RNA sequence: GGGAACGACUCGAGUAGAGUCGAAAAUAACAAAAACAGACAGGGCGACCUGGCACAGGCCGCAGAGCCAGGAAGCCCAUAAACGCAGAUAGAUCUGCGGCCUGAGGCGAGAAGAACUCGCCACAAACGGAGUGUACGACUUCGGUCGUGCACUCCGAAAAGAAACAACAACAACAAC
Reactivity to 2A3 in 0.01 (KOAc 150mM, MgCl2 10mM, bicine 150mM(pH8.5), 24C), signal-to-noise 2, nucleotides 027 to 126: u080a030a010c050a020a070a000a030a000c070a010g240a050c050a060g030g000g020c000g010a030c000c000u070g000g010c000a010c010a070g000g000c000c000g000c020a000g030a010g050c020c000a000g000g030a000a000g000c000c020c010a000u030a000a020a000c040g010c040a020g030a300u140a040g170a070u110c000u000g000c000g010g020c000c000u000g030a030g000g000c000g000a000g000a160a000g040a090a090c000u000c000g020c000c000a000c000a010a050a000
Reactivity to DMS in 0.01 (KOAc 150mM, MgCl2 10mM, bicine 150mM(pH8.5), 24C), signal-to-noise 1, nucleotides 027 to 126: u000a140a100c100a080a010a020a030a080c170a060g000a080c270a070g000g000g000c000g000a300c030c020u000g000g000c000a050c040a180g000g050c000c000g010c030a000g010a070g040c010c000a050g000g000a000a300g000c010c000c000a000u000a000a090a130c090g000c230a020g020a050u000a150g040a090u120c010u000g000c000g000g020c060c000u000g020a070g000g020c010g000a000g010a300a090g010a080a200c000u000c000g000c000c000a060c100a000a150a230
Chemical mapping of a 177-nucleotide RNA with 2A3 and DMS. For 2A3 the reverse transcriptase was SuperScript II with manganese. Conditions: 150 mM KOAc, 10 mM MgCl2 and 150 mM bicine (pH 8.5), 24 C. It was measured as part of the RMDB library OK1LIB. For DMS the reverse transcriptase was MarathonRT.